[RMDB]
RNA sequence: GGGAACGACUCGAGUAGAGUCGAAAACAAAACUGACGCGCUAUGAGGACAUCCCUCGUCAUACGACAACAAAACAAAACUGACCAGUUAUGAGGUCAUACAUCGUCAUAGCGAACAAAACAACAAAGCCUAUAUUUGCUUUCGAGCGGGUAUAGGCAAAAGAAACAACAACAACAAC
Reactivity to DMS in 0.01 (KOAc 150mM, MgCl2 10mM, bicine 150mM(pH8.5), 24C), signal-to-noise 7, nucleotides 027 to 126: c130a100a070a090a090c150u020g000a150c200g000c020g000c000u010a010u010g010a040g010g020a050c240a160u020c020c010c000u000c050g020u000c020a110u060a130c150g000a050c060a070a090c240a050a010a070a070c210a060a030a070a050c200u010g000a000c020c010a100g030u020u080a080u030g000a090g000g020u000c010a050u020a060c200a160u010c030g000u000c000a000u000a010g000c000g000a050a080c100a060a050a070a070c220a070a050c250a040a070a090
Reactivity to 2A3 in 0.01 (KOAc 150mM, MgCl2 10mM, bicine 150mM(pH8.5), 24C), signal-to-noise 8, nucleotides 027 to 126: c030a010a090a020a040c100u130g040a030c050g020c000g000c060u010a010u060g010a020g080g040a000c010a090u050c000c000c000u020c010g020u020c020a090u100a200c120g090a010c040a120a010c040a050a180a030a040c120a020a100a010a060c100u060g010a020c010c000a030g030u090u080a120u190g130a070g030g040u030c000a000u080a010c030a050u070c030g170u010c010a010u010a010g000c000g020a030a030c050a030a030a010a020c090a030a020c030a040a100a000

Source: RMDB library OK1LIB, as collected in RNAgym. The record gives the reactivity of an RNA of 177 nucleotides to DMS and 2A3. The reactions ran in a buffer of 150 mM KOAc, 10 mM MgCl2 and 150 mM bicine (pH 8.5), at 24 C. The DMS profile rests on 12,723 reads.